RNA sequence: GGGAACGACUCGAGUAGAGUCGAAAAGAGAACAGGAUGCGUCCUCACUCUGGAGUCGUGAAGGAAGGCUUCAAGUGGUCCAUCCAGGAGUGAGGGAUGGCCAUAGUACUCACUCAUGACGGAAUUACUCCGCUGGCAUGUAUCUGGCACCAGAGGAUGAGCUAAAUCAAUUCGUUGAUUUAGCUCAAAAAGAAACAACAACAACAAC
Reactivity to DMS in 0.01 (KOAc 150mM, MgCl2 10mM, bicine 150mM(pH8.5), 24C), signal-to-noise 2, nucleotides 027 to 156: g010a120g020a130a090c020a120g020g010a050u000g010c120g010u000c020c010u000c020a100c030u000c040u000g030g020a040g040u000c010g000u000g000a180a090g020g020a100a130g010g020c000u000u010c040a070a130g010u030g020g030u010c050c000a090u000c020c010a170g030g010a090g020u000g000a110g010g020g000a030u000g020g010c040c060a080u000a130g030u000a110c020u000c020a070c060u010c040a120u010g000a110c050g000g000a080a130u000u000a090c130u000c000c020g040c000u000g010g030c040a060u010g000u010a080u010c090u000g000g020c030a060c000c010a010g020a040g030g010a140
Reactivity to 2A3 in 0.01 (KOAc 150mM, MgCl2 10mM, bicine 150mM(pH8.5), 24C), signal-to-noise 6, nucleotides 027 to 156: g070a010g010a070a030c070a060g030g010a040u070g020c060g070u030c000c020u040c010a030c010u040c060u010g000g020a030g030u050c040g040u110g090a060a040g080g050a070a060g020g030c000u040u040c050a060a020g020u030g040g010u010c020c000a020u020c000c000a010g030g090a020g020u020g010a030g000g040g010a020u020g020g000c010c000a020u030a040g040u050a040c000u000c030a030c020u030c010a060u090g040a040c050g010g060a050a060u180u090a140c090u030c030c000g020c030u010g020g000c030a040u090g010u060a080u070c050u040g040g000c020a050c050c020a010g070a020g090g040a070